[RMDB]
Structure probing data (DMS and 2A3) for a 177-nucleotide construct.
RNA sequence: GGGAACGACUCGAGUAGAGUCGAAAAAAGAUCAACUCGUAAUUGAUUGAGUAUAAAUAACCUCUAGAGGGAGGUCGCGUGGAAACUAUGAUGAAACUCCUAGAAGUGGGCGUGCCUGGCAGAAGGAUGCUCUAUUCUUUUUCGAAAGAAUAGAGCAAAAAGAAACAACAACAACAAC
Reactivity to DMS in 0.01 (KOAc 150mM, MgCl2 10mM, bicine 150mM(pH8.5), 24C), signal-to-noise 8, nucleotides 027 to 126: a070a120g000a040u000c010a020a020c060u010c240g010u020a160a190u010u010g000a040u010u010g000a100g010u010a100u020a040a080a070u010a090a090c040c000u010c050u000a090g010a130g010g000g000a030g010g010u000c050g010c090g000u000g000g000a080a060a070c060u010a040u010g000a080u010g010a080a070a070c060u000c020c040u000a050g010a080a090g010u010g010g000g000c050g010u010g010c030c020u000g010g010c070a050g010a080a060g000g000a160
Reactivity to 2A3 in 0.01 (KOAc 150mM, MgCl2 10mM, bicine 150mM(pH8.5), 24C), signal-to-noise 6, nucleotides 027 to 126: a000a000g070a060u050c040a020a020c050u030c040g160u150a110a120u060u050g040a030u030u040g020a040g070u060a030u040a180a100a010u110a030a020c010c010u020c020u030a060g030a070g130g040g000a010g070g000u050c020g020c010g030u030g050g040a040a080a040c040u060a060u140g090a030u040g050a110a030a060c040u020c000c000u010a050g030a170a010g080u080g010g020g000c040g020u040g040c000c010u010g020g000c010a010g030a100a020g110g030a030